[RMDB]
RNA sequence: GGGAACGACUCGAGUAGAGUCGAAAACGUGUAUUCGCCUCGUGUCGAGGGCGUGCACCUGAGGUUCGGUGCGGUGGCGCGUGGUGGGCUGCGUUGGUCCGACCGACUGGAUGAUUUCCGCACAGAAUAUCACGUAGCGUUUCGACGCUACGUGAUAAAAAGAAACAACAACAACAAC
Reactivity to DMS in 0.01 (KOAc 150mM, MgCl2 10mM, bicine 150mM(pH8.5), 24C), signal-to-noise 2, nucleotides 027 to 126: c150g050u000g000u010a070u010u000c060g020c030c010u000c020g010u030g000u020c090g010a110g000g010g000c090g010u020g000c090a030c010c070u010g010a210g010g020u010u010c020g000g050u010g010c050g010g010u000g010g020c050g010c040g010u010g000g010u020g010g010g010c040u000g010c080g040u000u010g010g020u000c020c030g000a080c060c010g000a070c040u010g030g000a100u000g010a140u010u000u010c000c010g000c130a030c160a160g000a030a070
Reactivity to 2A3 in 0.01 (KOAc 150mM, MgCl2 10mM, bicine 150mM(pH8.5), 24C), signal-to-noise 1, nucleotides 027 to 126: c020g030u040g020u080a060u020u150c040g030c000c010u020c040g140u100g090u160c060g050a100g030g050g030c000g020u020g010c020a010c020c000u070g070a090g000g120u120u120c030g000g010u120g030c020g000g020u010g020g010c010g000c030g010u040g000g050u060g000g030g030c010u060g070c030g070u020u100g100g070u020c000c020g010a010c020c010g040a010c040u030g070g030a060u020g040a000u020u060u000c000c010g000c030a040c010a050g080a130a070